[RMDB]
RNA sequence: GGGAACGACUCGAGUAGAGUCGAAAACACUCACGAUUCGUCGUGAGUGAAAGAACGCCAAAGUGACGCAAUCUUGCGCGUCAGGAAGGCGAAACGAGGUAAAAACCGGGUCCUUCGGGACCCGGAACUACGUUCUUAUCUUCGGAUAAGAACGUAGAAAAGAAACAACAACAACAAC
Reactivity to 2A3 in 0.01 (KOAc 150mM, MgCl2 10mM, bicine 150mM(pH8.5), 24C), signal-to-noise 3, nucleotides 027 to 126: c000a000c000u020c000a000c010g020a010u070u070c170g050u020c010g000u100g000a000g000u010g000a000a000a000g020a100a010c020g000c000c030a110a060a010g140u010g010a000c000g000c010a020a130u120c180u130u300g050c110g000c010g040u010c000a000g010g040a040a040g000g000c000g010a020a020a000c040g050a070g030g130u150a060a040a020a030a040c000c000g000g010g000u010c010c000u060u100c160g040g000g000a000c000c010c000g000g000a000a000
Reactivity to DMS in 0.01 (KOAc 150mM, MgCl2 10mM, bicine 150mM(pH8.5), 24C), signal-to-noise 5, nucleotides 027 to 126: c000a040c000u000c000a000c000g010a040u010u010c220g020u000c000g030u010g010a020g030u000g010a030a050a090g030a120a190c010g000c010c000a020a140a300g000u000g000a020c000g000c000a110a140u010c170u010u000g040c230g000c000g000u010c000a020g010g010a260a180g000g010c010g010a040a050a070c090g000a090g010g000u010a040a050a070a110a100c010c000g000g000g010u000c000c000u000u010c180g040g010g000a020c000c000c000g000g000a010a040